[RMDB]
RNA sequence: GGGAACGACUCGAGUAGAGUCGAAAACAACACGUCCUCGUCGUACAGAGUGGUAACAUGUGUCACCACAUAUCCAAUCUUGGGUACACGGGCUUGACCCAACCCCUUGGGCGGAUGGUGGCACAUGAAAAGAAGUAACACUUCGGUGUUACUUCAAGCAAGGUUAGAUGUUCGCAUCUAACCUUGCAAAAGAAACAACAACAACAAC
Reactivity to DMS in 0.01 (KOAc 150mM, MgCl2 10mM, bicine 150mM(pH8.5), 24C), signal-to-noise 1, nucleotides 027 to 156: c040a060a040c040a050c030g040u020c000c000u000c030g080u000c100g020u000a120c170a060g010a200g050u010g010g000u000a020a260c030a020u000g010u000g000u010c000a010c000c000a080c040a120u010a010u000c000c030a070a300u010c010u010u000g000g010g020u000a170c240a190c080g000g020g070c010u010u000g020a170c040c010c010a020a150c170c000c020c060u000u000g000g000g000c300g020g000a030u000g000g040u040g010g000c000a000c000a000u000g000a010a050a090a050g000a060a010g010u000a030a040c030a030c000u000u000c300g070g000u000g020u000u000a000c000u020u010c000a000a230
Reactivity to 2A3 in 0.01 (KOAc 150mM, MgCl2 10mM, bicine 150mM(pH8.5), 24C), signal-to-noise 3, nucleotides 027 to 156: c060a020a050c020a010c080g070u060c020c020u070c030g170u040c030g040u170a100c110a070g020a070g020u140g080g030u130a120a010c000a000u000g000u000g000u010c000a000c010c000a060c080a150u300a020u050c010c000a010a010u000c000u010u000g010g000g020u010a030c020a020c050g000g000g020c030u250u300g200a300c000c000c010a000a020c000c000c000c000u000u000g000g000g000c000g000g000a000u000g010g000u000g000g020c000a000c000a000u000g010a000a000a000a020g000a000a000g000u000a000a000c000a000c000u050u070c250g050g000u000g000u000u000a000c000u000u000c000a000a010